This 207-nucleotide RNA was probed chemically with 2A3. Reactivities are given for positions 27 through 156. Conditions: 150 mM KOAc, 10 mM MgCl2 and 150 mM bicine (pH 8.5), 24 C. The 2A3 profile rests on 360 reads.

RNA sequence: GGGAACGACUCGAGUAGAGUCGAAAAGUAUCACAAUGACCUGUGCUAUGAUAUGCAAGGCGAAGGUCUCCUGGAACACUACUGCCGAUGCAAUUUGUGCACACCGCAUAGAUGUCUAGCUACAAACCCAGCCAUGCUAAAUGAAACGCAAUUAAUACUAAUUCAACCACUUCGGUGGUUGAAUUAGAAAAGAAACAACAACAACAAC
Reactivity to 2A3 in 0.01 (KOAc 150mM, MgCl2 10mM, bicine 150mM(pH8.5), 24C), signal-to-noise 1, nucleotides 027 to 156: g000u000a000u060c100a000c040a180a120u060g220a170c000c050u000g000u020g100c000u130a000u040g060a180u070a170u220g050c020a020a040g000g020c010g000a090a000g040g020u000c000u000c010c000u000g050g000a080a060c000a000c040u130a060c060u070g050c000c020g050a070u120g040c000a000a050u000u070u170g100u060g040c010a020c000a000c020c050g020c010a020u060a000g060a050u040g000u060c010u000a000g050c000u020a050c070a080a030a030c000c000c000a000g040c040c000a050u100g000c050u090a020a080a080u120g070a060a000a000c000g000c090a040a110u170u120a090a000u130a180